RNA sequence: GGGAACGACUCGAGUAGAGUCGAAAACAACACCUUGCACAAUGCCAACAAGCAAAUCGUCAUCUCAUCUGACCGCCCACCCAAGCAGCUCGCCACCCUCGAGGACCGGCUGAGAACCCGCUUUGAGCUGAUGUUAACGGUUCGCCGUUAACAUCAGAAAAGAAACAACAACAACAAC
Reactivity to DMS in 0.01 (KOAc 150mM, MgCl2 10mM, bicine 150mM(pH8.5), 24C), signal-to-noise 3, nucleotides 027 to 126: c160a110a120c050a060c040c020u000u000g010c050a050c060a050a130u030g010c030c060a020a070c090a140a050g030c060a040a070a040u000c060g000u010c090a010u010c000u040c050a050u020c060u000g000a090c020c030g020c000c020c050a090c010c000c020a030a100g000c030a070g000c000u000c040g030c030c010a060c050c010c000u050c040g020a130g010g010a040c080c050g010g000c050u060g000a120g010a090a100c030c040c020g010c040u000u000u030g000a060g050
Reactivity to 2A3 in 0.01 (KOAc 150mM, MgCl2 10mM, bicine 150mM(pH8.5), 24C), signal-to-noise 7, nucleotides 027 to 126: c050a010a000c020a030c020c020u020u090g000c030a040c030a110a110u100g030c030c010a100a070c030a080a140g060c040a050a060a100u120c040g070u040c020a050u020c030u020c030a120u020c060u050g030a030c020c030g020c000c020c010a030c000c010c000a020a030g020c010a020g010c010u010c010g050c010c000a030c010c010c000u060c030g010a120g010g030a070c010c050g030g000c040u060g010a040g030a060a050c010c030c010g020c030u080u070u070g090a060g010